[RMDB]
RNA sequence: GGGAACGACUCGAGUAGAGUCGAAAACUGUCCUGUCUGGAAGUACGUGAGUACUUCACGCUCUACGGGAGUAGAGCCAGACAGAUCGUGGAGCGAUGUCUUGGAACUACUCCCGUAGUUCACGUAUGACUCACGUCAUACCAAGACGACAGCCACGUCCACCCCAUGGAUUCGUCCAUGGGGUGGAAAAAGAAACAACAACAACAAC
Reactivity to 2A3 in 0.01 (KOAc 150mM, MgCl2 10mM, bicine 150mM(pH8.5), 24C), signal-to-noise 1, nucleotides 027 to 156: c040u000g020u020c060c030u090g020u000c000u010g000g000a090a020g070u120a020c000g000u000g000a020g000u110a300c020u030u060c000a010c000g040c050u040c000u000a000c000g010g000g000a030g030u000a000g000a020g040c010c000a000g020a000c000a030g120a030u070c050g050u100g300g040a240g180c000g020a020u010g000u050c030u210u200g010g010a070a100c000u000a020c040u000c000c000c030g000u000a000g000u000u020c010a000c050g000u020a000u020g030a000c000u000c000a000c000g000u000c000a010u090a130c000c000a020a130g000a000c000g000a000c000a000g010c000c010a040c000g110